[RMDB]
RNA sequence: GGGAACGACUCGAGUAGAGUCGAAAAAGGAAGCGAAGAAGAUAUGACUACCACUGCCGAAAAGACCGACCGGCCGGGAAAGCCGGGAAGCUCCGACACCAGCGGCCGCGUGGUACGGGUCACUGGGUACUAGGGAGUGAUUCGUCACUCCCUAGUAAAAAGAAACAACAACAACAAC
Reactivity to DMS in 0.01 (KOAc 150mM, MgCl2 10mM, bicine 150mM(pH8.5), 24C), signal-to-noise 3, nucleotides 027 to 126: a080g010g000a060a050g000c020g010a080a100g010a110a070g000a080u000a060u000g020a120c080u000a050c050c010a040c050u000g010c030c040g000a080a080a100a140g000a140c010c030g010a180c020c000g010g020c010c010g000g010g010a090a090a150g020c010c010g000g000g020a070a080g010c080u000c030c030g000a080c120a110c030c030a060g020c040g000g010c010c040g000c080g010u000g000g010u010a140c050g010g010g010u000c030a030c050u000g000g000g010
Reactivity to 2A3 in 0.01 (KOAc 150mM, MgCl2 10mM, bicine 150mM(pH8.5), 24C), signal-to-noise 1, nucleotides 027 to 126: a010g060g010a050a030g030c070g030a100a010g010a080a000g010a150u140a040u230g020a040c010u020a030c010c000a030c050u050g050c000c000g040a010a050a160a040g070a100c000c000g010a020c000c010g020g010c040c000g000g170g030a210a020a000g030c000c040g030g000g000a000a000g010c020u000c060c000g060a020c040a050c050c000a000g030c010g000g010c000c040g160c020g040u100g050g010u070a050c050g040g010g010u010c010a000c030u020g000g000g040